[RMDB]
About this RNA: This 177-nucleotide RNA was probed chemically with 2A3 and DMS. Conditions: 150 mM KOAc, 10 mM MgCl2 and 150 mM bicine (pH 8.5), 24 C. For DMS, 2,619 sequencing reads were counted.
RNA sequence: GGGAACGACUCGAGUAGAGUCGAAAAUCUAGGAUGUUCGCAUCCUAGAAAAUACCGAGACUCAACCUCGGUAGAGUUGAGUAACCCUAGGAAACAAGGGAAAAAGAUGGGGCUUCGGCCCCAUCAAGUUAGAAUUACACUUCGGUGUAAUUCUAACAAAAGAAACAACAACAACAAC
Reactivity to 2A3 in 0.01 (KOAc 150mM, MgCl2 10mM, bicine 150mM(pH8.5), 24C), signal-to-noise 1, nucleotides 027 to 126: u010c000u000a010g000g000a010u000g020u040u070c120g010c100a000u000c000c000u000a000g020a010a000a000a020u050a000c010c030g000a000g040a040c020u000c070a020a000c010c040u010c060g000g030u040a100g020a000g010u020u040g010a030g010u040a050a110c030c000c010u020a020g070g220a120a120a060c060a070a060g000g000g000a080a040a040a040a050g000a000u000g000g000g000g000c000u030u080c240g080g010c000c000c000c000a000u000c000a000a000
Reactivity to DMS in 0.01 (KOAc 150mM, MgCl2 10mM, bicine 150mM(pH8.5), 24C), signal-to-noise 3, nucleotides 027 to 126: u000c000u000a010g000g000a000u000g020u000u010c230g050c010a010u010c000c000u000a020g010a000a020a070a120u000a080c030c000g000a080g010a110c060u000c040a050a040c110c010u000c060g020g020u010a010g010a110g010u000u000g010a030g000u000a140a190c010c000c010u000a150g000g000a120a040a120c060a110a060g000g020g000a060a060a070a150a090g000a010u000g000g000g010g020c010u010u000c250g030g000c000c010c000c000a000u000c000a000a090
The data come from the RNA Mapping Database (RMDB), library M2PK50.